[RMDB]
RNA sequence: GGGAACGACUCGAGUAGAGUCGAAAACAAAAGUUACAUCGAUCUUAACUAUCGAAUAGCGCCAAACGGAUUGAUCGGUAUGACGUUGUCUUCGGCAGGCUCCCAGCCCUCCGGGGCGCGGUAGACGCUAGUCACCGCCAUUCGUGGCGGUGACUAGAAAAGAAACAACAACAACAAC
Reactivity to DMS in 0.01 (KOAc 150mM, MgCl2 10mM, bicine 150mM(pH8.5), 24C), signal-to-noise 2, nucleotides 027 to 126: c070a070a070a060a140g000u000u000a020c100a020u010c020g020a030u000c040u000u010a080a120c100u010a060u010c110g010a040a200u010a040g020c050g020c040c030a010a090a120c140g010g010a120u000u010g010a020u000c000g020g020u010a080u000g010a000c060g000u000u000g010u000c040u010u000c040g000g030c070a050g010g020c050u020c010c010c000a250g000c010c010c000u000c140c110g000g000g010g000c000g040c070g000g000u010a050g010a090c190g000
Reactivity to 2A3 in 0.01 (KOAc 150mM, MgCl2 10mM, bicine 150mM(pH8.5), 24C), signal-to-noise 1, nucleotides 027 to 126: c020a010a110a020a040g050u080u030a020c000a030u040c010g020a010u040c010u120u220a100a180c090u070a100u100c070g130a180a160u110a030g090c090g000c090c090a140a120a060c060g050g000a070u100u080g000a000u030c000g050g010u050a070u020g030a010c050g120u080u100g060u040c050u030u040c010g070g000c040a000g010g100c020u020c000c000c000a020g000c000c030c030u000c000c080g010g000g000g000c020g070c010g000g010u040a070g000a000c000g000
The record gives the reactivity of an RNA of 177 nucleotides to DMS and 2A3. DMS adducts were read by reverse transcription with MarathonRT. The RNA was probed in 150 mM KOAc, 10 mM MgCl2 and 150 mM bicine (pH 8.5) at 24 C.